[RMDB]
Structure probing data (2A3) for a 207-nucleotide construct.

RNA sequence: GGGAACGACUCGAGUAGAGUCGAAAAGAGCGAUUAGACAAAGGGGUAGAGCUACAUAUUAGAUAGCUGUAUAAUCGUUCAAGUUACAUCAAAACAUCUUCAAUAUUUAUUACUUACUUUCCUUUCGGCCAGAGUACGGUAUUCGUACCGUACUCAAUCCAUGGCGUGAAUUCGUUCACGCCAUGGAAAAAGAAACAACAACAACAAC
Reactivity to 2A3 in 0.01 (KOAc 150mM, MgCl2 10mM, bicine 150mM(pH8.5), 24C), signal-to-noise 2, nucleotides 027 to 156: g010a020g010c020g000a000u030u000a020g010a060c080a100a190a020g020g010g010g020u090a030g020a020g100c000u030a000c010a110u150a240u180u080a130g150a240u030a000g020c010u040g020u040a050u010a020a010u000c020g010u000u000c000a010a000g010u020u100a090c040a100u110c130a000a030a030a150c070a210u030c080u240u050c040a100a070u050a160u220u170u140a150u190u070a040c010u050u040a030c000u000u050u090c010c000u020u080u130c030g070g030c030c100a020g000a000g000u000a000c000g000g020u010a030u020u080c080g030u020a000c000c000g000u010a010c000u020c000a010a000

It was measured as part of the RMDB library M2RFPK.
Values are in units of 0.01, from 0 to 300, in steps of 10.
The 2A3 profile rests on 751 reads.
The reactions ran in a buffer of 150 mM KOAc, 10 mM MgCl2 and 150 mM bicine (pH 8.5), at 24 C.